[RMDB]
RNA sequence: GGGAACGACUCGAGUAGAGUCGAAAAGAUAUGGAUGAAAGCCGAUAAGAAGGGUUCGGAAACGAACCUCUUCUUUUGACGGCUAUGUAGUCCUAAGUCAAAAGGACGUAUGUUCGCAUACGUCCAACAACGGAUAGGAGUUCGCUCCUAUCCGUUGAAAAGAAACAACAACAACAAC
Reactivity to 2A3 in 0.01 (KOAc 150mM, MgCl2 10mM, bicine 150mM(pH8.5), 24C), signal-to-noise 2, nucleotides 027 to 126: g040a010u080a030u190g010g010a010u030g040a060a060a010g020c030c040g070a120u060a160a010g020a030a010g000g000g000u010u030c010g020g060a060a060a030c000g000a010a010c000c020u020c000u010u000c010u040u060u020u060g140a040c030g000g000c020u020a020u100g020u010a000g000u000c000c010u020a170a010g020u030c040a000a050a060a220g000g000a000c000g010u000a000u010g030u020u040c210g010c090a000u000a000c000g000u010c010c020a000a000
Reactivity to DMS in 0.01 (KOAc 150mM, MgCl2 10mM, bicine 150mM(pH8.5), 24C), signal-to-noise 3, nucleotides 027 to 126: g000a050u000a300u010g000g000a030u000g000a160a070a070g010c000c000g020a180u000a020a010g010a010a000g010g000g020u000u000c000g010g010a080a060a190c010g010a010a000c000c020u010c000u000u000c000u000u000u010u010g010a160c050g010g000c000u000a010u020g030u010a190g000u010c010c000u010a060a150g020u000c030a020a090a150a190g020g010a030c000g000u000a010u000g000u010u010c290g020c000a000u000a000c000g000u010c010c000a020a070